[RMDB]
RNA sequence: GGGAACGACUCGAGUAGAGUCGAAAAGGUAGGGUGAUGAAAAAGAAUCCUUAGGCGUGGUUGUGGCCGUCUUGGUCACCUGUGUGCCACUUGCCAAUGCAAGGACUUGUCAUAGUUACACUGACUAAACCCAAAGUGAGUUCGCUCACUUUGGGUUAAAAGAAACAACAACAACAAC
Reactivity to 2A3 in 0.01 (KOAc 150mM, MgCl2 10mM, bicine 150mM(pH8.5), 24C), signal-to-noise 4, nucleotides 027 to 126: g130g040u090a010g020g000g040u040g000a060u030g100a040a060a010a030a000g060a030a080u040c010c000u040u040a070g020g000c030g000u040g000g000u070u060g040u040g010g000c000c010g120u180c140u130u290g000g000u020c010a020c010c030u100g110u060g070u150g070c000c020a010c000u080u170g000c020c010a060a080u170g040c060a040a020g040g000a010c010u000u030g010u060c020a020u030a100g030u010u090a050c120a020c020u020g020a000c000u060a040
Reactivity to DMS in 0.01 (KOAc 150mM, MgCl2 10mM, bicine 150mM(pH8.5), 24C), signal-to-noise 4, nucleotides 027 to 126: g000g010u000a060g010g020g020u010g010a040u010g000a050a070a050a060a060g010a100a090u000c010c000u000u000a100g000g010c030g060u000g000g010u000u020g020u000g000g020c000c020g000u030c150u050u050g020g020u000c010a020c020c300u020g010u010g000u010g010c030c020a020c020u010u050g030c000c010a060a090u000g030c170a020a020g020g000a050c070u000u000g000u010c030a070u010a110g010u010u010a070c080a040c040u000g010a070c060u000a060